[RMDB]
RNA sequence: GGGAACGACUCGAGUAGAGUCGAAAAUAAAUGAGCGUACAGCACACUCAGACUGUACGCUAUCUGAGUGUGUCAACUUCAUAGUCCAACGACACACACAAGGCGUUGGAACAAGAGUGUGAGAAAAUUGAUAGUCAGGGUUCGCCCUGACUAUCAAAAAAGAAACAACAACAACAAC
Reactivity to DMS in 0.01 (KOAc 150mM, MgCl2 10mM, bicine 150mM(pH8.5), 24C), signal-to-noise 2, nucleotides 027 to 126: u000a100a070a070u010g000a030g010c020g050u010a060c120a130g000c030a020c050a010c010u010c010a100g020a070c060u000g010u010a080c120g020c020u000a010u010c000u010g030a060g000u010g000u010g030u000c090a090a030c080u010u000c080a040u000a060g020u010c010c020a010a080c030g000a020c010a080c060a060c130a140c220a060a080g000g010c090g010u000u020g010g000a020a050c130a080a110g030a060g020u000g000u010g020a160g010a070a010a090a140